[RMDB]
RNA sequence: GGGAACGACUCGAGUAGAGUCGAAAAGCAUCUUGCUUCGGCAAGAUGCAAAUAACGGUCAGUGCUUGCAGCUAGUCGUAAAUGCUAACUGGCCUUACCCUAAAACGAAUGCGUUCGCGCAUUCGAAGCUUUUAUUCCGGUUCGCCGGAAUAAAAGCAAAAGAAACAACAACAACAAC
Reactivity to 2A3 in 0.01 (KOAc 150mM, MgCl2 10mM, bicine 150mM(pH8.5), 24C), signal-to-noise 2, nucleotides 027 to 126: g000c000a000u000c000u010u010g000c020u070u050c140g080g000c000a000a000g010a000u000g050c000a010a010a000u050a020a020c040g000g000u000c000a000g010u010g090c100u100u120g030c010a060g000c060u120a050g170u130c120g070u070a020a090a120u080g000c020u040a050a040c000u010g010g020c000c000u010u070a060c010c000c000u040a040a070a000a030c000g010a010a000u010g040c000g020u040u040c290g000c000g000c140a010u010u000c000g010a020a010
Reactivity to DMS in 0.01 (KOAc 150mM, MgCl2 10mM, bicine 150mM(pH8.5), 24C), signal-to-noise 1, nucleotides 027 to 126: g000c000a000u000c000u020u000g030c000u000u010c190g030g020c000a020a020g020a000u000g000c030a000a030a060u000a080a100c230g000g010u000c000a000g000u000g000c120u020u020g020c050a070g020c070u000a130g000u000c160g030u000a060a100a100u000g010c040u000a030a010c000u010g000g010c000c010u000u000a010c010c000c000u010a040a050a080a140c000g000a010a000u000g010c020g020u000u000c210g000c000g020c000a000u000u000c000g000a080a060
The data come from the RNA Mapping Database (RMDB), library M2PK50. Structure probing data (2A3 and DMS) for a 177-nucleotide construct. DMS adducts were read by reverse transcription with MarathonRT. For 2A3 the reverse transcriptase was SuperScript II with manganese. Conditions: 150 mM KOAc, 10 mM MgCl2 and 150 mM bicine (pH 8.5), 24 C.